RNA sequence: GGGAACGACUCGAGUAGAGUCGAAAAUCUAUCACUUUCACCUGCAUCAGCUAAAAGUUAGACUUGCUUUAGAAAUCUACAAAAAUACAAAGCCACUCUUGUUGGACUAAGUGUGAAAUAGCUGAUAGCGUAGUAAUCAGUUCGCUGAUUACUACGCAAAAGAAACAACAACAACAAC
Reactivity to 2A3 in 0.01 (KOAc 150mM, MgCl2 10mM, bicine 150mM(pH8.5), 24C), signal-to-noise 2, nucleotides 027 to 126: u020c020u020a100u090c040a010c080u070u160u110c050a050c070c010u080g010c050a030u000c010a010g000c010u030a070a080a080a010g050u050u010a030g020a020c030u040u060g040c030u160u100u040a120g070a080a130a000u000c020u050a040c100a050a200a020a050a000u060a020c020a000a080a000g030c030c000a000c000u100c040u170u250g070u170u050g020g080a100c000u060a050a080g020u020g000u000g050a060a110a090u050a020g010c020u010g010a000u020a010
Reactivity to DMS in 0.01 (KOAc 150mM, MgCl2 10mM, bicine 150mM(pH8.5), 24C), signal-to-noise 2, nucleotides 027 to 126: u000c060u000a050u000c080a160c070u000u000u000c060a090c050c020u000g000c140a070u000c000a000g000c030u000a010a030a110a130g000u000u000a040g000a090c070u010u000g020c120u010u000u000a150g000a020a120a050u000c070u000a030c120a010a010a070a080a050u000a040c030a040a210a040g000c000c070a030c070u000c200u000u000g030u000u010g030g000a100c010u000a040a300g010u030g020u010g000a040a090a200u000a010g000c030u000g010a010u000a130